[RMDB]
RNA sequence: GGGAACGACUCGAGUAGAGUCGAAAAUGGCUUGGCCACUCGGGCUGACUUUGAUCCCAAAACGGAUGAGUUUGUGCUAAAUACACCGAACUUGGAGGCCUACAAAUGGUGGCCCGGCGGCUGUAAGCUCACCCUCACCUUUCGAGGUGAGGGUGAGAAAAGAAACAACAACAACAAC
Reactivity to DMS in 0.01 (KOAc 150mM, MgCl2 10mM, bicine 150mM(pH8.5), 24C), signal-to-noise 1, nucleotides 027 to 126: u020g010g100c010u000u000g000g000c000c000a070c010u000c250g010g000g060c000u010g010a090c000u000u000u000g000a020u030c030c000c180a040a010a030a300c280g040g050a010u010g000a110g020u000u000u040g030u000g000c000u030a000a000a150u070a300c020a000c040c060g000a030a070c010u010u000g010g020a300g000g000c010c030u000a010c140a030a250a070u000g000g000u000g000g020c000c000c040g040g000c010g000g010c040u010g000u030a040a010g000
Reactivity to 2A3 in 0.01 (KOAc 150mM, MgCl2 10mM, bicine 150mM(pH8.5), 24C), signal-to-noise 2, nucleotides 027 to 126: u180g170g000c020u010u040g010g050c000c000a000c000u050c060g010g060g000c050u040g000a010c000u160u090u300g000a030u160c070c000c000a010a010a010a010c070g020g000a130u060g000a020g010u000u040u000g040u060g000c010u030a060a140a000u260a010c030a060c060c080g030a030a030c020u000u000g000g020a010g000g150c000c000u040a100c100a050a120a120u100g000g040u000g000g020c000c000c000g000g000c000g020g030c020u020g060u160a040a040g010

Record summary:
Chemical mapping of a 177-nucleotide RNA with DMS and 2A3. 2A3 adducts were read by reverse transcription with SuperScript II with manganese. For 2A3, 792 sequencing reads were counted. It was measured as part of the RMDB library OK1LIB.